The record gives the reactivity of an RNA of 177 nucleotides to 2A3. 2A3 adducts were read by reverse transcription with SuperScript II with manganese. Reactivities are rounded to 0.1 and cut off at 0 and 3. Reactivities are given for positions 27 through 126. The reactions ran in a buffer of 150 mM KOAc, 10 mM MgCl2 and 150 mM bicine (pH 8.5), at 24 C.
RNA sequence: GGGAACGACUCGAGUAGAGUCGAAAAUAUCAACCUAAACAAAAGUAUUCCAACUAUUUCCAGGCAUUGGAUGGAUAUGUUGGCUUCACCACGUCGUCCAAUUGCUCAAUGGCAUACACUUGGACCAGGGUAGCGACGGAUUCGUCCGUCGCUACCCAAAAGAAACAACAACAACAAC
Reactivity to 2A3 in 0.01 (KOAc 150mM, MgCl2 10mM, bicine 150mM(pH8.5), 24C), signal-to-noise 1, nucleotides 027 to 126: u200a000u080c090a110a110c000c000u230a180a040a110c020a000a060a000a000g070u070a060u100u000c000c000a030a020c010u000a110u000u000u050c000c000a000g050g090c010a080u000u000g000g010a050u030g080g000a020u080a000u090g260u190u000g000g000c070u080u050c060a060c140c000a000c000g080u000c000g000u000c020c000a010a020u000u300g010c000u000c210a020a200u000g040g000c060a000u000a120c070a000c120u000u000g000g000a000c090c090a040